[RMDB]
RNA sequence: GGGAACGACUCGAGUAGAGUCGAAAAGGGCUUGACGCAUCGCCCGAAUAAGAUGCAUGUGCUUUUGCACUAAGAUAAAUGUCCGUAUAGUAGGGGACGUAGAACCUACUCAUUAAUGUCCGAAGAGUCUGGGACGAUCAUCAGGCAAGACUAAGAAACUGAUAAUGCGUUUCGACGCAUUAUCAGUAAAAGAAACAACAACAACAAC
Reactivity to DMS in 0.01 (KOAc 150mM, MgCl2 10mM, bicine 150mM(pH8.5), 24C), signal-to-noise 2, nucleotides 027 to 156: g010g000g030c060u000u000g040a030c060g000c010a020u000c010g000c020c020c020g050a090a160u010a070a060g040a100u000g010c000a130u000g020u010g010c020u020u000u000u010g030c000a020c030u000a050a030g030a100u010a080a080a100u000g020u010c020c070g060u010a150u000a060g060u000a050g010g000g010g010a210c140g010u000a110g020a130a150c030c000u010a010c030u010c110a120u010u000a040a120u000g020u000c000c020g020a210a130g020a150g000u000c040u000g040g000g010a070c040g020a090u000c010a100u010c010a050g000g020c000a070a070g000a070c060u000a100a150g010a120a050
Reactivity to 2A3 in 0.01 (KOAc 150mM, MgCl2 10mM, bicine 150mM(pH8.5), 24C), signal-to-noise 3, nucleotides 027 to 156: g010g000g000c010u060u080g090a010c040g000c010a020u030c000g030c000c010c000g000a020a020u130a020a020g010a030u040g000c040a040u080g020u000g000c020u070u100u220u270g010c020a010c040u050a080a040g030a130u120a070a170a060u140g030u000c020c030g060u100a090u080a100g010u010a010g000g000g000g030a020c060g020u050a070g050a040a010c000c000u000a010c010u010c010a010u000u190a150a090u130g060u000c040c040g050a100a030g000a030g080u000c000u060g050g000g010a020c020g030a100u070c040a030u050c010a010g040g000c040a070a000g010a020c020u060a110a050g070a110a190